[RMDB]
The record gives the reactivity of an RNA of 207 nucleotides to DMS and 2A3.
The DMS profile rests on 3,176 reads.
The RNA was probed in 150 mM KOAc, 10 mM MgCl2 and 150 mM bicine (pH 8.5) at 24 C.
The 2A3 profile rests on 952 reads.

RNA sequence: GGGAACGACUCGAGUAGAGUCGAAAACUGCCCCCUGGGUUCCCUUCCAUCGACAUGGGGCCUCAGCUGAAGGUGGUGGAGAAGGCACGCACAGCCACCAUGCUAUGUGCCGCAGGCGGAAAUCCAGACCCUGAGAUUUCUUGGUUCAAGGACUUCCCAGUACAAGGUGAUUCGUCACCUUGUACUGAAAAGAAACAACAACAACAAC
Reactivity to DMS in 0.01 (KOAc 150mM, MgCl2 10mM, bicine 150mM(pH8.5), 24C), signal-to-noise 1, nucleotides 027 to 156: c060u010g020c010c010c000c140c070u000g020g000g030u000u000c020c010c030u000u010c030c050a100u010c060g040a160c090a180u010g000g000g000g020c140c020u000c050a050g000c120u000g000a130a100g000g040u000g000g020u000g010g010a110g010a100a080g030g040c010a080c060g020c060a070c090a160g000c000c020a090c120c080a210u000g030c000u000a090u010g010u010g030c030c000g000c090a100g030g020c270g030g010a020a020a030u010c020c000a140g000a130c040c010c010u000g010a110g000a090u000u000u000c030u000u000g010g020u010u010c090a120a120g020g000a170c010u010u000c000c010
Reactivity to 2A3 in 0.01 (KOAc 150mM, MgCl2 10mM, bicine 150mM(pH8.5), 24C), signal-to-noise 2, nucleotides 027 to 156: c010u130g000c000c000c000c000c000u010g000g000g020u050u060c020c000c000u070u060c080c020a210u120c030g130a130c090a160u110g000g000g000g000c000c000u040c060a010g000c050u050g070a100a050g000g010u040g010g010u050g070g000a170g040a160a140g060g000c020a000c090g030c000a060c040a050g020c020c000a020c030c030a050u120g000c030u070a050u230g010u020g000c040c000g040c040a050g000g080c010g030g060a050a030a010u050c010c010a020g130a190c000c050c000u080g030a070g040a270u180u090u030c000u050u130g040g010u030u060c060a110a070g000g000a010c000u040u050c000c000